[RMDB]
RNA sequence: GGGAACGACUCGAGUAGAGUCGAAAAGGAAGAGACAUUCACUUCUGAACAAGGAUCUUCUGCCUGGGAGCCCAUGGCUGGUUUAGGAUACAGAUCCCAAACUGUCUGAUUCCAAAGCUUGUAUUCUAAACAGCUUCAUCUACGGAUGCUCCCUGAAUCUCAGGAGAAAUUUCGAUUUCUCCUGAGAAAAAGAAACAACAACAACAAC
Reactivity to DMS in 0.01 (KOAc 150mM, MgCl2 10mM, bicine 150mM(pH8.5), 24C), signal-to-noise 1, nucleotides 027 to 156: g010g010a050a010g000a100g020a150c070a180u000u000c060a180c050u000u000c080u000g030a040a150c040a130a180g000g000a170u000c000u000u000c000u000g000c090c050u000g000g010g010a030g040c020c020c000a100u000g010g010c010u000g010g010u000u000u000a020g040g000a030u000a090c030a060g020a160u000c030c010c010a040a050a180c090u000g010u000c020u000g000a220u010u000c090c010a100a210a090g010c060u000u010g000u000a020u000u000c020u000a040a040a060c030a030g000c010u020u000c040a010u000c080u000a050c070g030g000a080u000g020c010u010c000c000c000u020g020a080a300
Reactivity to 2A3 in 0.01 (KOAc 150mM, MgCl2 10mM, bicine 150mM(pH8.5), 24C), signal-to-noise 2, nucleotides 027 to 156: g020g000a010a000g020a000g010a020c020a000u050u040c010a030c080u280u130c150u190g010a050a030c080a180a080g000g000a010u000c020u010u010c000u040g000c000c010u020g010g000g000a000g000c020c000c010a070u120g030g000c000u010g200g050u040u000u000a000g000g000a000u000a000c010a020g050a110u070c010c030c020a110a080a110c080u090g090u130c050u060g070a150u120u100c090c000a150a090a010g020c020u060u080g000u010a000u000u010c000u000a020a000a000c000a000g000c010u130u080c030a080u020c050u100a070c100g060g030a080u060g010c000u000c000c000c000u000g030a000a050